The record gives the reactivity of an RNA of 207 nucleotides to DMS and 2A3.
Values are in units of 0.01, from 0 to 300, in steps of 10.
The reactions ran in a buffer of 150 mM KOAc, 10 mM MgCl2 and 150 mM bicine (pH 8.5), at 24 C.
RNA sequence: GGGAACGACUCGAGUAGAGUCGAAAAGCAACUGUCAUUCGGCUUGAUGGUGCUGUAGAAAUCUCGAUUAAACUUGGCGUAGCUGACGCCAUCGCUGACGUAGUUUCAACGGGCCGGACAUUACGCAAACAAGGUCUCGCAACUUUCGGUGAAGUGAACUAUCACUAAUAUUCGUAUUAGUGAUAGUAAAAGAAACAACAACAACAAC
Reactivity to DMS in 0.01 (KOAc 150mM, MgCl2 10mM, bicine 150mM(pH8.5), 24C), signal-to-noise 6, nucleotides 027 to 156: g020c020a070a070c030u010g010u000c030a150u000u000c090g030g000c050u020u010g010a060u000g010g030u000g030c020u000g020u010a110g020a080a110a100u000c020u000c020g020a140u000u000a060a070a090c080u000u000g020g020c010g030u000a090g020c130u010g010a190c020g010c000c000a020u000c030g000c050u000g020a070c110g020u000a120g020u000u010u000c020a080a080c020g020g000g030c010c020g020g000a080c060a080u000u000a080c050g000c090a070a050a160c050a070a280g010g010u000c020u000c020g020c040a030a040c060u000u000u000c030g010g010u010g010a080a090g010u000g010a100
Reactivity to 2A3 in 0.01 (KOAc 150mM, MgCl2 10mM, bicine 150mM(pH8.5), 24C), signal-to-noise 9, nucleotides 027 to 156: g000c020a020a130c020u030g020u040c020a070u080u080c060g070g010c070u050u060g010a020u030g010g030u020g000c030u050g040u080a050g130a060a110a070u070c060u030c080g110a120u110u190a130a110a090c090u040u070g010g000c010g010u030a040g040c070u050g060a020c010g000c000c000a020u060c030g000c040u040g020a030c050g080u090a040g010u050u060u120c040a060a040c030g010g010g010c020c000g010g010a020c010a040u100u220a090c120g040c090a050a130a060c030a080a040g020g010u000c040u050c060g020c010a030a050c040u040u110u080c040g040g020u060g040a060a040g050u060g090a020

Values cover nucleotides 27 to 156.